[RMDB]
RNA sequence: GGGAACGACUCGAGUAGAGUCGAAAAGAUAUGGAUCCUGAGGGCCGAUAAGCUCAUGUCGGAAACGACAUCGAGCUUUUGACGGCUGUAGGGAUCCUAAGUCAAAACCUCGAGUUCGCUCGAGGAACGAUGUCUCAAUGUUCGCAUUGAGACAUCGAAAAGAAACAACAACAACAAC
Reactivity to 2A3 in 0.01 (KOAc 150mM, MgCl2 10mM, bicine 150mM(pH8.5), 24C), signal-to-noise 2, nucleotides 027 to 126: g020a010u040a040u130g010g010a000u010c030c050u080g020a210g100g040g010c060c040g030a100u060a140a010g020c000u000c000a010u020g020u010c000g010g080a110a060a050c010g000a010c010a000u030c050g050a010g000c020u090u030u000u020g000a000c030g010g000c060u060g000u000a000g000g110g000a000u020c000c000u010a010a000g000u000c000a020a040a080a190c000c000u000c000g010a010g010u180u210c300g060c110u010c000g010a000g000g010a020a020
Reactivity to DMS in 0.01 (KOAc 150mM, MgCl2 10mM, bicine 150mM(pH8.5), 24C), signal-to-noise 3, nucleotides 027 to 126: g000a050u000a300u000g000g000a010u000c000c000u020g010a300g010g010g010c000c000g020a080u010a010a020g020c010u000c030a030u010g010u000c010g000g000a140a090a190c000g030a000c000a000u000c270g030a000g000c000u010u010u010u000g020a240c110g010g000c000u020g000u010a300g010g000g010a010u000c000c000u000a010a080g010u000c050a130a080a130a130c040c010u000c000g020a020g010u000u010c300g000c020u000c010g010a000g010g000a050a030

Chemical mapping of a 177-nucleotide RNA with 2A3 and DMS.
For DMS the reverse transcriptase was MarathonRT.
The reactions ran in a buffer of 150 mM KOAc, 10 mM MgCl2 and 150 mM bicine (pH 8.5), at 24 C.